[RMDB]
RNA sequence: GGGAACGACUCGAGUAGAGUCGAAAAAGCGGGCACGCGUUUUUGCCGCCCAUCAGGCUGGCCCAGUUCCCGGCCUGAAACACACGGUCGUUGCCGGCCAUGCCGUAGUAUUUGCUGAUGCUCAACCCCGUUAUUCACUAUUCGUAGUGAAUAACGGAAAAGAAACAACAACAACAAC
Reactivity to DMS in 0.01 (KOAc 150mM, MgCl2 10mM, bicine 150mM(pH8.5), 24C), signal-to-noise 4, nucleotides 027 to 126: a040g010c070g000g020g000c080a070c170g000c040g020u010u020u030u020u050g030c050c130g000c000c020c050a090u000c040a150g000g000c000u010g040g000c030c030c060a100g000u010u020c040c010c050g010g000c020c000u000g000a030a090a060c220a100c140a120c120g010g020u000c050g000u020u020g010c060c080g000g000c050c010a030u000g020c030c020g000u010a110g000u000a070u020u000u000g000c010u000g000a060u020g000c020u000c060a070a150c160c040
Reactivity to 2A3 in 0.01 (KOAc 150mM, MgCl2 10mM, bicine 150mM(pH8.5), 24C), signal-to-noise 6, nucleotides 027 to 126: a000g090c100g020g020g020c060a050c120g090c050g050u040u040u020u130u170g060c030c010g000c010c000c000a040u070c010a000g030g000c000u040g000g000c030c010c030a020g070u090u080c020c010c000g010g000c000c010u050g030a080a100a000c130a000c000a010c090g000g020u020c010g070u060u070g060c050c020g010g000c000c030a050u140g000c000c020g070u080a080g020u010a110u030u100u120g030c060u070g020a120u100g010c010u030c050a070a060c030c000
Structure probing data (DMS and 2A3) for a 177-nucleotide construct. 2A3 adducts were read by reverse transcription with SuperScript II with manganese. In probing experiments dimethyl sulfate is read out at A N1 and C N3, which are open when not base-paired. It was measured as part of the RMDB library OK1LIB. For 2A3, 6,278 sequencing reads were counted. The RNA was probed in 150 mM KOAc, 10 mM MgCl2 and 150 mM bicine (pH 8.5) at 24 C.